[RMDB]
RNA sequence: GGGAACGACUCGAGUAGAGUCGAAAACUCCAAGAGCACCUCUGGGGGCACAGCAGCCCUGGGCUGCCUGGUCAAGGACUACUUCCCCGAACCGGUGACGGUGUCGUGGAACUCAGGCGCCCUGACCGUACAGUCUUCCAUUCGUGGAAGACUGUACAAAAGAAACAACAACAACAAC
Reactivity to 2A3 in 0.01 (KOAc 150mM, MgCl2 10mM, bicine 150mM(pH8.5), 24C), signal-to-noise 1, nucleotides 027 to 126: c050u030c020c000a040a020g030a030g010c020a050c070c000u030c110u090g040g000g050g070g020c010a030c020a110g080c060a050g000c020c000c000u010g020g040g000c010u050g000c040c000u040g010g030u070c050a080a130g070g000a050c000u060a020c030u110u000c000c000c010c000g000a000a040c020c000g060g140u090g070a060c020g060g000u110g160u050c020g040u000g010g010a050a000c050u040c110a030g070g000c050g040c030c000c000u000g000a010c000c030
Reactivity to DMS in 0.01 (KOAc 150mM, MgCl2 10mM, bicine 150mM(pH8.5), 24C), signal-to-noise 1, nucleotides 027 to 126: c030u000c000c030a120a130g010a100g050c070a030c060c010u010c080u000g010g030g000g020g020c050a080c080a120g000c100a080g000c000c010c020u010g010g010g000c000u010g040c030c040u000g010g010u010c070a130a080g030g010a120c070u010a050c170u000u000c000c000c040c000g000a120a040c000c010g000g000u010g000a180c020g000g030u000g000u000c010g040u000g000g020a040a010c110u010c070a040g000g000c100g000c000c000c020u000g010a030c080c070